[RMDB]
RNA sequence: GGGAACGACUCGAGUAGAGUCGAAAAGAAAGAAAUCACAUGUAACUGAGCAAUGAGUUAAUCGGAUCAAAGCGGAUUGAUCUACGAAUAACUCGUAGUGAGUGAUCCAAUAUCCGUAUUAGAGAAAGGGUAUCUAUGACUUCGGUCAUAGAUACCCAAAAGAAACAACAACAACAAC
Reactivity to 2A3 in 0.01 (KOAc 150mM, MgCl2 10mM, bicine 150mM(pH8.5), 24C), signal-to-noise 1, nucleotides 027 to 126: g020a040a140a000g100a000a180a070u250c080a040c000a030u300g000u100a070a000c000u050g000a000g070c040a150a060u060g000a000g100u110u070a030a000u100c030g000g000a000u000c020a030a000a000g140c070g000g080a090u000u030g080a000u000c000u000a010c000g000a000a110u030a050a040c050u040c050g020u000a030g000u030g030a030g050u150g000a000u000c000c000a000a000u030a000u080c000c000g050u030a080u070u050a080g220a000g010a090a030a130
Chemical mapping of a 177-nucleotide RNA with 2A3. The reactions ran in a buffer of 150 mM KOAc, 10 mM MgCl2 and 150 mM bicine (pH 8.5), at 24 C. 2A3 adducts were read by reverse transcription with SuperScript II with manganese. For 2A3, 602 sequencing reads were counted.